This 207-nucleotide RNA was probed chemically with 2A3 and DMS. Values are in units of 0.01, from 0 to 300, in steps of 10. The reactions ran in a buffer of 150 mM KOAc, 10 mM MgCl2 and 150 mM bicine (pH 8.5), at 24 C. For DMS, 2,875 sequencing reads were counted.

[RMDB]
RNA sequence: GGGAACGACUCGAGUAGAGUCGAAAAUUCCGCGUUCGCGCGGAAGAGGUGCGUACUACAAGACAUGUCUACAUGGCCGAGCAUUCCCAAAUAGGAAUGCGUUUGACGCCAUGCGGACAACAGCUUGUAUCGCUGAGUCCGGUGAUUCGUCACCGAAGUUUAAUCCAGUGUUCGCACUGGAUUAAACAAAAGAAACAACAACAACAAC
Reactivity to 2A3 in 0.01 (KOAc 150mM, MgCl2 10mM, bicine 150mM(pH8.5), 24C), signal-to-noise 3, nucleotides 027 to 156: u020u000c000c000g000c000g020u070u060c260g040c020g000c020g160g000a030a030g050a050g030g140u160g000c020g020u120a190c070u000a000c030a020a000g010a030c010a120u120g010u000c000u010a030c000a000u010g000g000c000c010g020a010g000c000a000u000u040c000c030c000a100a160a030u300a060g000g010a000a000u010g000c020g090u100u140u190g120a050c020g000c000c000a000u000g010c010g000g000a000c010a010a000c010a030g040c010u000u010g000u030a070u300c010g000c040u020g040a030g050u080c100c060g000g000u010g010a030u030u090c170g070u040c200a000c010c020g030a190a030
Reactivity to DMS in 0.01 (KOAc 150mM, MgCl2 10mM, bicine 150mM(pH8.5), 24C), signal-to-noise 2, nucleotides 027 to 156: u000u000c010c000g020c020g050u010u000c300g030c020g040c010g000g000a040a010g000a130g000g010u010g030c040g040u000a060c110u000a060c000a020a030g000a040c150a300u030g000u000c000u030a020c020a010u010g010g000c000c020g020a170g030c000a020u000u000c000c000c000a030a160a180u000a040g020g040a040a000u000g000c000g020u000u000u010g000a140c220g000c000c010a000u000g020c000g020g010a010c000a020a080c070a200g010c020u000u000g000u010a040u010c040g010c000u000g000a210g010u010c060c030g000g060u000g000a090u000u010c180g020u020c000a000c010c010g020a020a130